[RMDB]
RNA sequence: GGGAACGACUCGAGUAGAGUCGAAAAAGUGCACUAGGUACGCCUAGUGCACAUUCCAGGACAUACUGCUGAGGAUGUCAAAAAUGCAGUUGGAGUCCUCAACUGGAUAGGCUACGGCCUAACCAGAAAAAGACUUGGUUGUUCGCAACCAAGUCAAGAACUAGUCUUGGUUCGCCAAGACUAGUUCAAAAGAAACAACAACAACAAC
Reactivity to DMS in 0.01 (KOAc 150mM, MgCl2 10mM, bicine 150mM(pH8.5), 24C), signal-to-noise 1, nucleotides 027 to 156: a160g000u010g020c000a010c010u000a000g010g020u010a130c300g010c000c000u010a010g000u000g040c000a000c000a030u000u010c030c000a200g000g000a090c040a050u000a060c030u000g010c060u050g010a120g010g030a090u000g020u020c030a050a070a070a120a180u010g040c020a030g060u010u000g010g020a180g010u010c000c000u000c000a040a100c010u000g010g000a240u000a020g050g030c020u000a150c280g040g010c000c000u000a000a060c030c000a030g010a020a100a210a070a250g020a030c010u000u000g000g000u000u000g000u010u000c180g010c030a030a000c000c020a010a000g020u000c010a010a050
Reactivity to 2A3 in 0.01 (KOAc 150mM, MgCl2 10mM, bicine 150mM(pH8.5), 24C), signal-to-noise 1, nucleotides 027 to 156: a000g000u000g000c000a000c000u010a000g000g030u070a020c160g060c010c010u030a000g000u000g030c000a010c000a000u000u030c020c000a000g020g010a000c010a040u120a060c020u040g050c000u040g040a060g160g110a220u240g220u300c160a070a140a000a020a020u080g000c010a020g000u110u080g030g070a170g030u020c010c010u030c030a060a130c010u030g010g000a030u000a000g000g000c000u020a020c240g060g000c020c000u010a020a020c000c010a000g110a050a020a010a000a000g010a010c000u000u000g010g020u020u010g050u060u050c120g000c030a010a000c010c010a000a000g000u000c000a010a020